The record gives the reactivity of an RNA of 177 nucleotides to 2A3 and DMS. Reactivities are given for positions 27 through 126. Conditions: 150 mM KOAc, 10 mM MgCl2 and 150 mM bicine (pH 8.5), 24 C.

RNA sequence: GGGAACGACUCGAGUAGAGUCGAAAAACUCACUUUUCGAAAUGGCAAACGUAAUCCACAGUUUAUAUUUCGAUGCAUUUCCGCACUGAUUAAUUUGAAGGUUCGUUUGUAGGGUUCAAGAGCAUAGCACUGAGGUAGCAUUCGUGCUACCUCAGUGAAAAGAAACAACAACAACAAC
Reactivity to 2A3 in 0.01 (KOAc 150mM, MgCl2 10mM, bicine 150mM(pH8.5), 24C), signal-to-noise 5, nucleotides 027 to 126: a000c010u000c010a030c050u090u040u070u100c090g060a000a040a010u100g050g010c010a030a000a000c010g100u170a010a070u080c010c020a040c020a060g030u030u100u020a200u040a070u080u140u060c100g050a120u030g010c020a080u130u170u140c080c110g050c010a020c030u030g040a050u030u070a060a030u070u070u100g060a120a030g000g000u010u000c010g000u000u020u010g020u040a050g030g120g030u030u010c040a070a000g000a010g030c050a060u130a120g030
Reactivity to DMS in 0.01 (KOAc 150mM, MgCl2 10mM, bicine 150mM(pH8.5), 24C), signal-to-noise 1, nucleotides 027 to 126: a100c010u000c070a180c050u000u010u000u010c120g030a010a040a060u050g010g010c010a010a000a000c030g000u030a040a040u010c020c090a270c080a060g010u000u030u000a090u040a070u020u000u010c070g000a070u010g000c020a110u010u030u020c160c120g000c040a040c020u000g000a070u000u000a040a080u030u020u020g000a080a100g000g030u000u000c020g000u000u000u010g000u000a030g000g000g020u010u010c060a020a090g010a050g000c140a040u020a100g000